[RMDB]
The data come from the RNA Mapping Database (RMDB), library TTRDEL. Structure probing data (DMS and 2A3) for a 177-nucleotide construct. The DMS profile rests on 2,289 reads. 2A3 is a SHAPE reagent: it acylates the 2'-hydroxyl of flexible nucleotides of all four kinds. Reactivities are rounded to 0.1 and cut off at 0 and 3.

RNA sequence: GGGAACGACUCGAGUAGAGUCGAAAAGAUAUGGAUAACAGCAACAGCUACCCAUCGGAAACGAUGGUGUAGACAUGCUGAGUCCUAAGUCAAAAGAAGGUGAUUCCGUUCGCGGAAUCACCUUCAAGGUACCUAUCUUGUUCGCAAGAUAGGUACCAAAAGAAACAACAACAACAAC
Reactivity to DMS in 0.01 (KOAc 150mM, MgCl2 10mM, bicine 150mM(pH8.5), 24C), signal-to-noise 2, nucleotides 027 to 126: g000a010u010a170u010g000g010a010u000a110a180c070a010g000c000a020a090c300a160g000c000u000a010c000c000c000a000u000c000g010g000a090a040a090c000g010a000u000g020g020u000g010u010a000g010a090c110a130u000g000c000u010g010a300g000u000c000c000u010a020a150g010u000c030a120a070a060a100g000a010a000g040g010u000g000a000u000u000c000c000g030u000u000c230g010c010g000g000a010a000u000c020a000c000c000u000u000c000a010a010
Reactivity to 2A3 in 0.01 (KOAc 150mM, MgCl2 10mM, bicine 150mM(pH8.5), 24C), signal-to-noise 2, nucleotides 027 to 126: g030a010u060a000u060g020g000a020u070a300a180c000a000g000c010a010a100c030a300g090c020u000a010c010c010c000a000u000c010g000g020a050a020a020c000g010a020u000g000g020u090g010u000a000g080a050c030a030u030g000c000u000g000a000g000u000c000c000u000a070a010g050u040c030a050a030a030a090g020a000a000g020g010u010g010a010u020u000c000c020g040u090u100c300g000c010g100g000a010a010u000c000a020c000c000u010u000c000a000a010